Chemical mapping of a 177-nucleotide RNA with DMS. In probing experiments dimethyl sulfate is read out at A N1 and C N3, which are open when not base-paired.
RNA sequence: GGGAACGACUCGAGUAGAGUCGAAAAGAUAUGGAGUUAUCGAUAAGCUGCCAUCGGAAACGAUGGGCAGCUUUUGACGAUACUCCUAAGUCAAACAAGACCACAGACUUCGGUCUGUGGUCUUGAACAGUACUGAAACCUUCGGGUUUCAGUACUGAAAAGAAACAACAACAACAAC
Reactivity to DMS in 0.01 (KOAc 150mM, MgCl2 10mM, bicine 150mM(pH8.5), 24C), signal-to-noise 2, nucleotides 027 to 126: g020a030u000a300u000g000g020a040g000u000u000a000u000c010g010a120u000a000a040g010c010u010g000c000c000a040u000c010g000g000a130a060a130c000g000a010u000g010g000g030c000a000g010c000u000u000u000u000g010a140c060g010a010u000a030c010u000c000c000u000a000a050g010u000c020a190a130a300c010a010a000g000a010c000c000a000c000a000g000a020c000u000u010c240g050g010u000c020u000g000u000g010g000u000c000u000u000g000a060a190